RNA sequence: GGGAACGACUCGAGUAGAGUCGAAAAAGUUCUGGCCUGCCCUGUCCAAGCACAGAGUUGGAUCACGAGGCCCAAAUGAAAAUAUGGGCUUCUUGAUUCCUAAAGUGGGGCGGACCGCAUGAGGCUGGCUUCACAGAGCAGUGAACAGCUCCCGCUCGGUAUAUCAGGACUUCGGUCCUGAUAUACCAAAAGAAACAACAACAACAAC
Reactivity to 2A3 in 0.01 (KOAc 150mM, MgCl2 10mM, bicine 150mM(pH8.5), 24C), signal-to-noise 2, nucleotides 027 to 156: a000g020u080u020c020u000g020g010c000c000u010g010c000c000c000u020g100u010c060c030a150a040g060c050a110c030a070g140a020g100u110u190g010g000a000u000c000a000c010g000a000g020g020c000c020c000a040a060a090u250g090a210a110a020a000u160a140u110g000g000g000c010u000u000c000u000u000g000a000u130u170c000c000u110a080a060a040g070u040g040g030g000g030c010g020g000a030c010c040g040c040a020u150g010a070g020g000c000u020g040g110c000u000u070c010a010c020a050g160a050g100c080a010g010u000g050a070a000c000a010g020c020u080c010c010c000g040c050u120c130

Notes: Structure probing data (2A3) for a 207-nucleotide construct. The data come from the RNA Mapping Database (RMDB), library ARCHII. The RNA was probed in 150 mM KOAc, 10 mM MgCl2 and 150 mM bicine (pH 8.5) at 24 C. 2A3 adducts were read by reverse transcription with SuperScript II with manganese.